[RMDB]
RNA sequence: GGGAACGACUCGAGUAGAGUCGAAAACGCAAAGCUGCAGCGCGGCGCUCUGGAGGCCUUGCCCCGCGCACUGCUCUUUACAUGGCCCGACGUGAGGGCACUUCGGGGGCAGUGCUGCGGCCUCGUGAAACUGCCCCUAAGUUCGCUUAGGGGCAAACAGGGUGUAUGGAUUCGUCCAUACACCCUGAAAAGAAACAACAACAACAAC
Reactivity to 2A3 in 0.01 (KOAc 150mM, MgCl2 10mM, bicine 150mM(pH8.5), 24C), signal-to-noise 1, nucleotides 027 to 156: c050g020c030a030a020a030g010c010u030g000c000a020g030c010g000c000g100g020c120g100c070u060c030u010g010g020a020g000g030c050c060u090u160g010c010c000c000c000g030c000g030c030a020c040u040g020c020u050c040u150u120u100a140c110a130u220g030g000c020c020c020g080a210c030g050u030g020a300g000g010g050c070a090c000u020u030c010g000g000g010g000g000c000a000g010u040g000c010u010g020c000g000g020c010c000u020c000g000u010g000a110a040a070c070u040g000c000c000c000c000u000a000a000g010u000u030c020g050c110u000u000a000g000g000g010g000c000a000a000a000
The record gives the reactivity of an RNA of 207 nucleotides to 2A3. For 2A3, 881 sequencing reads were counted. Conditions: 150 mM KOAc, 10 mM MgCl2 and 150 mM bicine (pH 8.5), 24 C. 2A3 is a SHAPE reagent: it acylates the 2'-hydroxyl of flexible nucleotides of all four kinds.